[RMDB]
RNA sequence: GGGAACGACUCGAGUAGAGUCGAAAAAGGUGAUUCUUAUUACCCCACUGAUUGUAGUGCUAUUCAUUCACUGCGCUUUAGAAAGCUUGGUGGUGCUGGUGUUGCUUUUUCAGAAGAUGUGGCAGUUAAAACUAUUGAUCCUGUCUACAAGGUUCGACCACUGUGUUGAAUUCGUUCAACACAGUGGAAAAGAAACAACAACAACAAC
Reactivity to DMS in 0.01 (KOAc 150mM, MgCl2 10mM, bicine 150mM(pH8.5), 24C), signal-to-noise 1, nucleotides 027 to 156: a080g000g010u010g010a120u010u000c070u000u020a060u000u000a150c010c030c030c030a100c050u000g000a110u000u040g020u000a060g040u010g010c070u000a110u000u000c080a100u000u000c000a060c060u000g010c120g000c080u000u000u000a090g010a130a100a100g030c050u000u000g020g060u010g000g000u000g050c020u010g000g010u000g010u000u010g000c010u000u000u000u000u000c030a070g040a090a110g040a110u000g030u010g000g000c000a050g020u010u000a050a040a090a110c060u000a150u000u000g000a130u000c070c000u000g000u000c060u000a100c040a020a110g040g000u000u000c020g020a230
Reactivity to 2A3 in 0.01 (KOAc 150mM, MgCl2 10mM, bicine 150mM(pH8.5), 24C), signal-to-noise 3, nucleotides 027 to 156: a020g070g010u050g040a130u130u020c030u110u110a160u110u140a120c000c010c010c020a030c030u060g020a170u120u110g010u050a050g000u010g080c040u070a110u110u140c090a050u160u050c000a010c040u040g000c020g020c050u080u100u000a200g050a140a100a000g020c030u050u050g010g000u000g010g000u030g000c040u030g020g050u020g020u030u000g000c000u070u130u010u040u010c020a040g020a060a010g020a070u080g000u030g040g010c050a030g010u060u130a090a050a050a050c070u090a130u170u050g000a020u020c000c000u060g070u110c010u060a070c030a090a040g090g000u060u080c010g040a010